This 177-nucleotide RNA was probed chemically with DMS. The DMS profile rests on 1,929 reads.
RNA sequence: GGGAACGACUCGAGUAGAGUCGAAAAUCAUGCGCGGGUCAUAGUUGGCAAAGUACCAGGCAUCUUUUCGCGUCACCCACAUGCUGUACUGCACCUGGGCCAUGUAAGCCGAUUUUAUUGCCUCGAAAGAAGACGUCUAUUUCGAUAGACGUCUUCUAAAAGAAACAACAACAACAAC
Reactivity to DMS in 0.01 (KOAc 150mM, MgCl2 10mM, bicine 150mM(pH8.5), 24C), signal-to-noise 2, nucleotides 027 to 126: u010c070a070u010g030c090g020c090g020g000g020u000c090a120u000a050g000u020u010g010g030c030a090a050a140g000u000a100c070c070a050g010g020c080a030u000c040u000u000u000u000c100g020c050g010u010c060a070c030c000c000a110c170a050u010g000c030u000g000u000a050c070u000g010c080a040c050c060u000g010g020g000c030c070a050u000g020u000a070a120g020c020c060g000a090u000u000u000u000a050u020u000g000c030c000u020c100g010a090a070